[RMDB]
RNA sequence: GGGAACGACUCGAGUAGAGUCGAAAAAUCUUGGCGAAGUCAGCGCGGAAGGAGCGCGCAACUCCUUACCCUCGCCUUUUUUUUUCCGCUCCCGUUCGCGUAAGCGUUCAGCGGAAAAGGGACCAAAUAUGGCAUAACACUUCGGUGUUAUGCCAUAAAAAGAAACAACAACAACAAC
Reactivity to DMS in 0.01 (KOAc 150mM, MgCl2 10mM, bicine 150mM(pH8.5), 24C), signal-to-noise 2, nucleotides 027 to 126: a030u010c090u010u010g010g030c030g000a030a080g010u000c140a080g000c130g060c260g030g000a050a010g000g000a020g010c050g010c230g020c150a100a030c000u000c010c010u000u000a130c050c000c010u000c040g000c020c010u010u000u010u000u000u000u000u000u000c000c010g020c020u000c090c060c070g000u000u000c000g010c010g000u020a110a130g010c020g000u000u000c050a080g010c000g000g000a010a000a010a020g010g010g010a110c060c100a050a040a110